[RMDB]
RNA sequence: GGGAACGACUCGAGUAGAGUCGAAAAACGGUGCGGAAGUUCGCGCUUCCGUGAAACGCGAAAAUCGGACGGUGGCUGCAAGUCGCAUCGCAAAACCGCGGCACGUGGAGUUAGCGAGAGGAGGCUGAAACCAUCCAACACUUCGGUGUUGGAUGAAUCACUGUUUUUGGUUCGCCAAAAACAGUGAAAAAGAAACAACAACAACAAC
Reactivity to DMS in 0.01 (KOAc 150mM, MgCl2 10mM, bicine 150mM(pH8.5), 24C), signal-to-noise 2, nucleotides 027 to 156: a000c020g000g080u000g040c000g030g010a070a100g010u000u000c210g030c260g000c010u000u000c000c080g020u000g010a050a020a060c000g010c000g000a070a050a120a090u010c050g010g010a090c040g000g000u000g020g000c030u000g030c080a100a130g000u010c010g000c000a090u000c040g080c030a060a040a060a120c070c050g030c040g050g020c060a060c050g000u030g010g020a100g000u000u000a110g020c050g000a050g010a120g010g010a100g020g000c020u000g020a120a140a160c080c000a020u020c000c000a000a010c000a000c000u000u030c300g020g030u000g030u000u000g000g000a000u010g000a030a080
Reactivity to 2A3 in 0.01 (KOAc 150mM, MgCl2 10mM, bicine 150mM(pH8.5), 24C), signal-to-noise 3, nucleotides 027 to 156: a000c030g010g010u050g020c030g010g030a050a030g030u060u120c050g000c010g000c030u010u000c010c000g000u010g050a080a060a020c100g000c020g070a000a040a000a130u130c050g000g030a010c040g010g050u010g030g010c070u080g040c090a040a070g040u060c020g030c050a020u020c020g000c050a070a080a030a010c040c040g010c030g030g030c050a020c080g010u080g020g020a070g010u060u110a020g020c020g020a010g010a030g040g030a020g030g000c020u020g000a040a020a000c000c000a000u000c000c000a000a000c010a000c010u070u080c220g090g000u000g000u000u000g000g000a000u000g000a000a010
The data come from the RNA Mapping Database (RMDB), library M2RFPK. This 207-nucleotide RNA was probed chemically with DMS and 2A3.